[RMDB]
RNA sequence: GGGAACGACUCGAGUAGAGUCGAAAAGAUAUGGAAGGUAAGAUCUCCUACCCACCUCGUAGUGGAUCUCUAUAUCGGAAACGAUAUAGAUCUCCAUCACGAGAGGGAGAUCUUACCUUCCUAAGUCGAAAUAUGUUUUCUUCGGAAAACAUAUUUCAAAAGAAACAACAACAACAAC
Reactivity to DMS in 0.01 (KOAc 150mM, MgCl2 10mM, bicine 150mM(pH8.5), 24C), signal-to-noise 6, nucleotides 027 to 126: g000a080u010a300u010g000g010a030a000g000g000u010a000a010g010a030u000c000u000c010c000u010a120c090c060c150a300c110c010u000c000g020u000a070g040u000g010g010a000u000c250u000c000u000a000u000a010u000c010g020g000a100a090a230c010g000a010u000a000u000a000g000a010u010c170u000c000c000a000u000c060a000c010g000a020g010a110g020g000g000a010g000a000u000c000u000u000a000c000c000u000u000c000c000u000a010a100g000u010c110
Reactivity to 2A3 in 0.01 (KOAc 150mM, MgCl2 10mM, bicine 150mM(pH8.5), 24C), signal-to-noise 1, nucleotides 027 to 126: g080a030u180a060u230g000g000a010a010g030g000u020a010a000g000a010u020c000u000c020c000u060a160c040c040c020a090c030c000u000c010g030u020a070g030u000g000g040a030u020c000u000c010u050a020u010a000u020c010g000g000a080a070a030c020g010a000u000a000u000a010g000a020u000c010u000c000c000a020u040c030a020c000g000a020g000a020g030g000g010a000g000a000u020c000u000u010a000c000c010u000u000c000c000u000a010a000g010u000c020